[RMDB]
This 177-nucleotide RNA was probed chemically with 2A3 and DMS. For 2A3, 2,700 sequencing reads were counted. Conditions: 150 mM KOAc, 10 mM MgCl2 and 150 mM bicine (pH 8.5), 24 C. 2A3 adducts were read by reverse transcription with SuperScript II with manganese.
RNA sequence: GGGAACGACUCGAGUAGAGUCGAAAAGAUAUGGACAGGAGAUGCAAGGUAUCGGAAACGAUACUCUUGCUAAUCUCCGUCCUAAGUCAAAGAAUGUAAUUUUACGUUCGCGUAAAAUUACAUUCAACAGUCUGCCUAUGUUCGCAUAGGCAGACUGAAAAGAAACAACAACAACAAC
Reactivity to 2A3 in 0.01 (KOAc 150mM, MgCl2 10mM, bicine 150mM(pH8.5), 24C), signal-to-noise 1, nucleotides 027 to 126: g010a010u090a030u130g070g000a010c220a270g030g000a000g010a000u020g020c010a010a020g030g010u000a000u000c000g030g000a090a060a030c000g010a010u000a010c040u040c010u080u000g030c000u010a010a000u000c000u040c000c000g010u000c000c000u010a130a010g000u010c070a050a050a160g000a010a010u010g010u000a000a010u020u010u000u000a020c040g020u050u110c300g000c010g090u010a010a000a000a000u000u010a010c010a000u020u010c000a000a020
Reactivity to DMS in 0.01 (KOAc 150mM, MgCl2 10mM, bicine 150mM(pH8.5), 24C), signal-to-noise 2, nucleotides 027 to 126: g010a080u000a300u000g010g000a000c000a170g050g000a020g030a030u000g000c000a010a060g000g000u000a000u000c000g010g000a190a110a170c010g000a010u000a000c050u000c010u000u000g000c000u020a040a060u000c000u000c000c000g000u000c000c000u000a000a070g000u000c010a090a120a140g000a010a000u000g000u000a010a010u000u000u010u000a010c010g030u000u030c270g020c000g030u000a000a030a010a000u000u000a000c000a000u000u000c000a100a160